An RNA of 177 nucleotides, treated with 2A3 and DMS and read out base by base.
Conditions: 150 mM KOAc, 10 mM MgCl2 and 150 mM bicine (pH 8.5), 24 C.

RNA sequence: GGGAACGACUCGAGUAGAGUCGAAAAUGGUAGCUAUGGAGAACUGAUACAGUGCCUUUCAAUAGUUCUUGGAAAUUCUUCAAAUAUAUUCCCCAAAUAUUGCCUUUGCACCACUCACUCUAUCCUCCACCUUACGUGAGUUCGCUCACGUAAGGUGAAAAGAAACAACAACAACAAC
Reactivity to 2A3 in 0.01 (KOAc 150mM, MgCl2 10mM, bicine 150mM(pH8.5), 24C), signal-to-noise 2, nucleotides 027 to 126: u070g030g030u050a040g030c030u020a040u090g010g000a070g030a050a050c060u040g010a050u110a200c080a070g060u040g050c020c000u040u130u020c020a050a020u010a120g020u020u040c000u030u090g090g070a120a150a210u150u020c020u080u050c040a000a110a000u120a010u010a100u130u020c020c000c000c000a040a180a090u120a100u130u110g030c000c000u070u060u070g050c020a040c020c000a020c020u000c010a050c000u020c000u010a070u020c000c000u050c050
Reactivity to DMS in 0.01 (KOAc 150mM, MgCl2 10mM, bicine 150mM(pH8.5), 24C), signal-to-noise 2, nucleotides 027 to 126: u000g000g000u000a030g030c060u020a130u000g000g000a040g010a100a030c020u000g010a170u000a090c090a060g010u000g030c090c040u000u000u000c120a130a080u000a060g030u000u000c040u010u000g000g010a070a110a130u000u010c030u000u020c030a030a100a110u000a030u010a110u010u000c030c000c000c160a080a040a100u010a010u000u000g010c040c020u010u000u000g010c050a030c030c020a030c040u010c040a020c040u000c000u030a120u000c010c020u000c140
Reactivities are given for positions 27 through 126.